[RMDB]
Overview: This 207-nucleotide RNA was probed chemically with DMS and 2A3. The 2A3 profile rests on 1,752 reads. 2A3 adducts were read by reverse transcription with SuperScript II with manganese. DMS adducts were read by reverse transcription with MarathonRT. The RNA was probed in 150 mM KOAc, 10 mM MgCl2 and 150 mM bicine (pH 8.5) at 24 C.

RNA sequence: GGGAACGACUCGAGUAGAGUCGAAAAUCACUGUCCAAACCGCUCACCCAUGCCUAUAACACACUGCACACUUUGGUUAGUAAUGCCGUCAUUACAGGCGAUAUGUUUGCUAGAGCUUCUGUACCUUUUGACCAGCAAACAUGGACAAACGUAUGGAUGCCUCUAAUAUUUUCGAAUAUUAGAGGCAAAAAGAAACAACAACAACAAC
Reactivity to DMS in 0.01 (KOAc 150mM, MgCl2 10mM, bicine 150mM(pH8.5), 24C), signal-to-noise 3, nucleotides 027 to 156: u000c040a080c050u000g020u000c030c040a050a060a100c060c030g000c050u000c040a120c030c000c020a140u000g030c010c000u000a080u010a050a070c030a080c050a060c040u000g020c030a030c040a040c030u000u020u000g030g010u010u010a070g020u000a100a090u010g020c020c050g010u010c040a090u000u010a060c070a100g000g070c010g000a130u000a030u000g010u000u000u000g000c000u010a060g020a130g010c040u000u010c030u000g000u000a090c080c020u000u020u010u000g010a170c010c020a060g000c040a060a040a070c120a070u000g010g010a110c030a030a070a040c140g030u000a080u000g010g020a300
Reactivity to 2A3 in 0.01 (KOAc 150mM, MgCl2 10mM, bicine 150mM(pH8.5), 24C), signal-to-noise 3, nucleotides 027 to 156: u060c010a000c090u030g030u040c000c020a010a060a030c090c040g030c020u060c020a090c000c010c000a020u040g010c020c010u120a110u090a160a010c050a000c000a010c030u050g020c040a020c010a030c120u060u070u130g090g000u090u050a050g000u060a110a020u060g040c050c020g070u070c020a050u020u110a030c040a030g020g060c000g010a060u000a010u130g040u040u050u010g000c000u020a020g000a060g100c000u100u060c040u060g110u160a180c020c060u030u110u030u110g090a120c010c020a000g010c050a010a000a020c020a020u020g030g000a000c000a020a050a000c130g000u000a060u000g050g010a010